Conditions: 150 mM KOAc, 10 mM MgCl2 and 150 mM bicine (pH 8.5), 24 C. The record gives the reactivity of an RNA of 207 nucleotides to 2A3. Reactivities are given for positions 27 through 156.
[RMDB]
RNA sequence: GGGAACGACUCGAGUAGAGUCGAAAAGAAAUUGCUUAGGCAACUUUUCCAAAGUGUGACUGACUCCAGAACUUGUAAGCUAAACUUACUCUUGCAAUUUAAAUUGCGCCCUUGGACCAACAGCAUCAGUGGCACCAGGAGCCUGUUAGAAAUGCAAGUCAGCUAAUUACUUCGGUAAUUAGCUGACAAAAGAAACAACAACAACAAC
Reactivity to 2A3 in 0.01 (KOAc 150mM, MgCl2 10mM, bicine 150mM(pH8.5), 24C), signal-to-noise 2, nucleotides 027 to 156: g000a000a140a010u060u050g000c070u130u100a060g000g140c040a100a040c060u140u080u060u140c040c010a080a050a010g020u020g020u020g060a070c000u010g010a030c020u000c050c020a010g030a090a060c080u060u070g010u010a020a010g010c140u170a190a100a060c020u040u010a060c020u010c010u140u010g000c000a010a090u000u040u140a260a250a080u070u030g010c050g020c020c000c000u020u040g010g030a050c030c030a010a090c070a030g070c020a070u060c020a060g030u040g000g000c040a020c030c010a020g000g030a010g040c040c030u030g010u010u010a080g010a150a130a030u090g040c010a000a190